[RMDB]
RNA sequence: GGGAACGACUCGAGUAGAGUCGAAAAAUCAAAAGUGUCAGUUCAUUAAGGCAAGAUUAGUGUCAUGGGUGAAUGGAGCAUCACAGUUUAAUGCUUUAACUUAUUGGAACCUCACUUUCCACUUCCUUAAAAUAGAGACUAUCAAAACAAAACAAAACUGAUGCUGCAUAUUCGUAUGCAGCAUCAGAAAAGAAACAACAACAACAAC
Reactivity to DMS in 0.01 (KOAc 150mM, MgCl2 10mM, bicine 150mM(pH8.5), 24C), signal-to-noise 1, nucleotides 027 to 156: a190u000c050a040a040a100a040g000u000g020u000c060a200g000u000u010c000a080u010u010a000a050g000g000c050a150a170g000a120u010u000a080g010u000g030u020c070a100u000g020g030g020u000g000a060a080u000g000g000a090g040c000a030u000c050a100c060a250g000u010u000u000a060a050u000g020c000u000u000u000a050a130c030u000u020a050u000u020g020g000a050a040c080c010u000c120a020c030u010u000u010c070c030a060c130u000u000c000c000u000u000a030a020a030a160u000a170g010a250g000a070c030u000a070u000c060a020a040a070a090c040a120a050a030a130c110a090a080a050a200
Reactivity to 2A3 in 0.01 (KOAc 150mM, MgCl2 10mM, bicine 150mM(pH8.5), 24C), signal-to-noise 4, nucleotides 027 to 156: a000u110c050a040a050a000a020g050u020g040u030c020a010g020u040u040c040a040u060u070a050a020g040g000c050a030a030g050a110u070u100a070g040u030g030u120c080a080u120g010g000g010u060g040a040a060u140g050g030a050g040c010a010u050c010a010c030a080g020u050u080u190a080a020u040g030c020u010u080u070a090a050c030u020u140a070u090u140g060g010a010a010c000c010u000c030a030c000u040u040u030c030c020a060c030u040u050c030c010u070u090a070a070a020a040u090a050g060a000g060a050c060u090a040u160c070a000a080a030a060c080a040a080a040a030c090a050a170a060a040